Source information: An RNA of 207 nucleotides, treated with 2A3 and DMS and read out base by base. For DMS, 5,824 sequencing reads were counted. The 2A3 profile rests on 3,190 reads. The reactions ran in a buffer of 150 mM KOAc, 10 mM MgCl2 and 150 mM bicine (pH 8.5), at 24 C.
RNA sequence: GGGAACGACUCGAGUAGAGUCGAAAACAUAUUUUGUACGCUCACUCUCUAAGAAUGACAAAAACUUUAUUAUGAUUCCAACUGUUGGAUACGAAGGUACACAGGCCUUGAUUAGUGUAGCAAAUCCCGACGUCAGGAAAGAAAUUUACAUGGAAGAUCAUCAGUAUAGUUUCGACUAUACUGAUGAAAAAGAAACAACAACAACAAC
Reactivity to 2A3 in 0.01 (KOAc 150mM, MgCl2 10mM, bicine 150mM(pH8.5), 24C), signal-to-noise 5, nucleotides 027 to 156: c010a010u180a110u110u140u100u190g030u040a030c070g000c070u020c010a030c010u040c010u000c020u030a040a040g030a100a120u060g030a050c060a060a120a030a040a050c070u150u130u100a120u180u080a120u250g060a110u070u070c010c020a060a040c120u130g110u180u060g070g020a010u020a100c060g040a050a030g020g010u060a030c050a000c020a070g070g000c020c030u020u020g010a040u040u100a030g020u010g050u090a020g000c010a030a040a070u030c000c000c000g050a040c040g040u050c020a010g010g120a040a070a030g110a040a120a020u170u200u070a070c060a050u120g040g100a050a020g100a050
Reactivity to DMS in 0.01 (KOAc 150mM, MgCl2 10mM, bicine 150mM(pH8.5), 24C), signal-to-noise 3, nucleotides 027 to 156: c030a100u000a090u000u000u010u000g020u000a100c100g020c110u000c060a050c050u000c020u000c110u000a100a130g000a060a060u000g000a120c040a050a100a090a130a080c040u000u010u000a060u010u000a080u010g010a180u000u000c010c010a060a150c100u000g010u000u000g010g020a130u000a050c040g010a080a060g000g010u000a090c060a020c070a110g020g000c020c010u000u000g000a130u000u000a060g030u000g010u000a090g010c060a040a090a100u010c020c000c010g030a120c060g030u000c050a050g020g020a070a040a080g010a020a100a110u000u020u000a060c040a060u000g000g000a060a160g010a130
Source: RMDB library OK3TST, as collected in RNAgym.